Structure probing data (2A3 and DMS) for a 207-nucleotide construct. The reactions ran in a buffer of 150 mM KOAc, 10 mM MgCl2 and 150 mM bicine (pH 8.5), at 24 C. For 2A3 the reverse transcriptase was SuperScript II with manganese. It was measured as part of the RMDB library M2RFPK.
[RMDB]
RNA sequence: GGGAACGACUCGAGUAGAGUCGAAAAAGCCAUACCAUUACGAUGGUAUGGCAAGUCCGUGACGGCGAUAGAUCCCGCCUGGCCGAUGCCGAACUGCCGAUCUGGCUGAUGGUUCCUGCCCCGUCAAAAAACGUAAAGCACUUCGGUGCUUUACGAACAUAUGUAUGAACUUCGGUUCAUACAUAUGAAAAGAAACAACAACAACAAC
Reactivity to 2A3 in 0.01 (KOAc 150mM, MgCl2 10mM, bicine 150mM(pH8.5), 24C), signal-to-noise 5, nucleotides 027 to 156: a000g010c000c000a000u000a000c000c000a000u040u040a050c240g110a020u010g000g000u010a000u010g000g000c000a000a010g010u000c020c010g020u040g030a030c010g010g030c040g020a050u060a140g070a050u090c010c010c010g030c020c040u030g020g020c000c030g060a050u100g040c010c020g060a120a070c070u100g020c020c030g090a150u080c060u070g010g020c010u030g040a100u110g030g000u040u050c010c010u030g030c010c000c000c000g000u000c000a030a070a030a050a010a000c010g000u000a000a000a000g000c000a000c010u030u120c230g080g000u010g000c000u000u000u000a000c000g010a010a000
Reactivity to DMS in 0.01 (KOAc 150mM, MgCl2 10mM, bicine 150mM(pH8.5), 24C), signal-to-noise 3, nucleotides 027 to 156: a120g000c000c000a020u000a020c010c000a050u000u000a090c250g030a130u010g000g020u000a000u000g010g050c010a000a000g010u000c010c060g020u010g020a100c030g000g010c070g000a170u000a100g000a070u000c040c000c020g010c030c010u010g010g010c010c060g030a150u000g010c020c020g010a100a080c070u000g030c030c020g010a120u010c020u000g060g030c030u000g010a160u010g020g020u000u010c030c020u000g010c050c020c000c010g020u010c040a000a050a080a050a080a150c020g010u010a000a000a010g010c000a010c000u010u010c260g030g010u000g000c000u000u000u000a000c010g010a020a090